[RMDB]
RNA sequence: GGGAACGACUCGAGUAGAGUCGAAAACGAGAUUCGUCCACGUCACCAUGAGUUAAAAUUUAACUCUCAGUAAAUUUUAACUCAUGAGUGAAUCUGCGAGUUAAAUUUUAACUCAGGGUGACGUGGAGCUAAACAUCCAGUUCGCUGGAUGUUUAGCAAAAGAAACAACAACAACAAC
Reactivity to 2A3 in 0.01 (KOAc 150mM, MgCl2 10mM, bicine 150mM(pH8.5), 24C), signal-to-noise 1, nucleotides 027 to 126: c040g050a040g020a130u150u100c080g020u020c060c000a000c010g000u000c000a000c000c000a020u000g000a000g000u000u010a020a010a010a000u000u000u000a010a000c000u000c010u010c020a010g020u100a040a120a170u120u190u030u100a050a030c010u060c050a040u060g000a000g010u020g010a000a020u010c010u010g000c000g000a000g000u020u000a000a000a010u020u030u020u010a000a000c000u000c000a000g000g000g000u000g010a000c000g000u000g000g000a000
Reactivity to DMS in 0.01 (KOAc 150mM, MgCl2 10mM, bicine 150mM(pH8.5), 24C), signal-to-noise 1, nucleotides 027 to 126: c070g010a190g000a160u000u000c080g030u000c000c000a000c020g000u000c000a000c000c000a070u000g010a020g010u010u000a010a030a000a000u000u000u010a020a010c010u010c000u000c040a020g010u000a050a080a090u010u020u000u010a100a100c060u000c160a070u000g010a020g000u010g000a050a050u010c000u000g000c120g000a020g000u000u000a000a010a080u000u000u000u000a000a010c010u000c000a030g000g000g010u000g020a000c000g040u000g000g010a040
Structure probing data (2A3 and DMS) for a 177-nucleotide construct. It was measured as part of the RMDB library RFMREP. 2A3 adducts were read by reverse transcription with SuperScript II with manganese. The reactions ran in a buffer of 150 mM KOAc, 10 mM MgCl2 and 150 mM bicine (pH 8.5), at 24 C. For DMS, 1,317 sequencing reads were counted.